This 177-nucleotide RNA was probed chemically with 2A3 and DMS. High DMS reactivity at an A or C suggests that its Watson-Crick edge is free. It was measured as part of the RMDB library RFM100. For DMS the reverse transcriptase was MarathonRT. For 2A3 the reverse transcriptase was SuperScript II with manganese. For DMS, 1,511 sequencing reads were counted. The reactions ran in a buffer of 150 mM KOAc, 10 mM MgCl2 and 150 mM bicine (pH 8.5), at 24 C.
[RMDB]
RNA sequence: GGGAACGACUCGAGUAGAGUCGAAAAGGAACGGACGCGCGCUUAGUUGACGAGGAGGAGGUUUAUCGAGGUUUUCGGCGGAUGCCUCCCGGCUGGAGCGAUGACAGCCGCAAGUCCUCUCUUAAAACACACCACGAGAGUUCGCUCUCGUGGUGUGAAAAGAAACAACAACAACAAC
Reactivity to 2A3 in 0.01 (KOAc 150mM, MgCl2 10mM, bicine 150mM(pH8.5), 24C), signal-to-noise 1, nucleotides 027 to 126: g050g000a110a000c090g010g060a000c040g050c000g040c000g050c020u070u030a060g060u030u020g050a020c150g010a070g060g080a000g000g040a020g000g020u010u170u010a070u090c030g020a140g100g140u020u060u110u130c100g090g000c070g010g020a000u030g000c000c000u040c020c000c000g000g000c000u010g000g040a160g100c120g020a010u070g050a020c040a040g030c000c040g000c080a050a070g020u000c000c000u010c000u000c000u000u120a070a070a000a000
Reactivity to DMS in 0.01 (KOAc 150mM, MgCl2 10mM, bicine 150mM(pH8.5), 24C), signal-to-noise 1, nucleotides 027 to 126: g040g040a120a130c020g040g020a080c060g000c050g010c090g000c060u010u000a140g080u000u020g020a170c050g040a020g000g000a020g030g000a030g030g000u010u000u080a090u000c040g020a080g000g020u000u020u080u000c040g010g000c130g000g000a090u080g010c030c000u000c000c010c000g020g040c000u000g010g010a060g010c050g000a020u000g000a030c020a000g000c060c000g030c120a030a250g000u020c000c030u000c020u000c070u030u030a030a110a070a180